[RMDB]
This 207-nucleotide RNA was probed chemically with 2A3 and DMS. The reactions ran in a buffer of 150 mM KOAc, 10 mM MgCl2 and 150 mM bicine (pH 8.5), at 24 C. As a SHAPE reagent, 2A3 marks flexible, mostly unpaired nucleotides at the ribose 2'-OH. Reactivities are given for positions 27 through 156. It was measured as part of the RMDB library ARCHII. DMS (dimethyl sulfate) methylates the pairing face of unpaired adenines and cytosines. For DMS, 2,712 sequencing reads were counted.
RNA sequence: GGGAACGACUCGAGUAGAGUCGAAAACCUGUGAACCUCGUCAGGUCCGGAAGGAAGCAGCGAUAAGCAGUCAUUUUCAUGUGCCGUGGAUACGUCUGGCUUGAGCUAACUGCAUAGGUAACGUUCAUAAGUUAUUGUCGAAGUGAGGUGCACGGUUCCCUCUAAUAUCGUUCGCGAUAUUAGAGGGAAAAGAAACAACAACAACAAC
Reactivity to 2A3 in 0.01 (KOAc 150mM, MgCl2 10mM, bicine 150mM(pH8.5), 24C), signal-to-noise 4, nucleotides 027 to 156: c000c000u010g020u020g020a010a040c000c000u020c020g070u070c050a040g020g070u020c010c030g100g070a130a060g010g010a030a000g030c020a000g000c010g050a060u030a110a020g000c020a000g050u050c060a070u030u050u070u050c070a060u070g090u120g130c050c050g060u050g030g020a030u080a160c050g040u000c040u040g080g030c000u010u020g040a010g060c020u060a040a060c030u030g030c040a070u060a080g000g050u020a030a000c030g010u080u110c110a070u140a220a060g000u010u040a060u090u140g090u070c060g030a050a000g050u030g110a020g000g000u020g010c020a010c040g030g000u030u020
Reactivity to DMS in 0.01 (KOAc 150mM, MgCl2 10mM, bicine 150mM(pH8.5), 24C), signal-to-noise 1, nucleotides 027 to 156: c000c000u000g060u000g000a030a000c000c030u000c030g010u010c100a090g000g030u010c040c030g050g000a150a100g020g000a080a100g020c010a140g050c030g020a170u000a050a120g020c030a120g000u050c080a080u000u000u010u010c090a080u000g030u000g000c050c050g000u000g020g010a130u000a060c050g010u010c030u020g030g000c010u020u000g010a110g010c100u000a020a040c010u000g000c050a130u000a070g040g040u000a050a050c030g000u000u010c050a120u020a060a120g010u010u000a010u010u010g020u000c030g010a110a120g030u000g010a030g010g030u000g010c050a040c030g020g010u000u000